[RMDB]
RNA sequence: GGGAACGACUCGAGUAGAGUCGAAAAGAUAUGGAGCUCUGCCAAGACCAACAGCUCGGAAACGAGACAUGGUCGACGCAGAGGCUCCUAAGUCACGGAAGAAUGAGUCUUCGGACUCAUUCUUCAAGCUACGAGACUGGUUCGCCAGUCUCGUAGCAAAAGAAACAACAACAACAAC
Reactivity to DMS in 0.01 (KOAc 150mM, MgCl2 10mM, bicine 150mM(pH8.5), 24C), signal-to-noise 1, nucleotides 027 to 126: g000a090u000a300u000g000g010a010g010c000u000c000u000g000c000c040a000a300g010a000c000c000a030a170c260a130g040c020u010c000g000g030a100a060a160c000g000a020g030a020c080a130u000g010g000u000c000g030a300c300g000c020a020g020a050g000g030c000u010c000c000u000a000a070g020u000c050a070c240g010g010a040a000g000a010a000u000g000a040g000u000c000u000u000c170g030g000a010c000u000c000a000u000u000c000u010u000c000a010a050